Annotation: This 177-nucleotide RNA was probed chemically with 2A3 and DMS. The data come from the RNA Mapping Database (RMDB), library M2PK90. 2A3 adducts were read by reverse transcription with SuperScript II with manganese. The DMS profile rests on 861 reads.

RNA sequence: GGGAACGACUCGAGUAGAGUCGAAAAAAUAGCGGGUCAAGGUACAACGCAGAGAGAUAGGCUCAUCCCAAGUUCUCUUCGGAGUACCAAGACUUCGGUACAGAAGAGAUACGGACUCUUCAUAGAAGAAAUUCAUGACUUUCGAGUCAUGAAUUUCAAAAGAAACAACAACAACAAC
Reactivity to 2A3 in 0.01 (KOAc 150mM, MgCl2 10mM, bicine 150mM(pH8.5), 24C), signal-to-noise 1, nucleotides 027 to 126: a010a000u200a020g050c020g010g000g010u020c000a000a020g040g020u010a010c010a000a000c050g000c010a000g000a000g000a000g030a020u070a180g000g000c020u030c080a110u100c000c000c010a000a010g020u050u010c000u000c000u050u030c000g010g010a020g020u000a010c000c000a000a010g010a000c020u030u040c010g010g020u080a060c030a040g010a020a000g010a010g000a020u050a180c170g060g090a040c050u000c000u050u010c040a020u070a040g120a160a020
Reactivity to DMS in 0.01 (KOAc 150mM, MgCl2 10mM, bicine 150mM(pH8.5), 24C), signal-to-noise 2, nucleotides 027 to 126: a110a150u000a110g010c010g020g020g010u010c020a030a300g000g010u010a010c010a000a190c000g000c070a050g040a010g000a050g000a060u010a120g030g000c080u000c300a110u000c300c020c010a060a120g000u010u000c000u000c010u000u000c010g010g000a300g010u000a000c010c000a010a300g010a020c070u000u000c060g010g000u000a070c110a100g000a020a010g000a000g010a110u010a060c230g000g000a120c010u000c010u000u000c010a150u020a060g020a110a130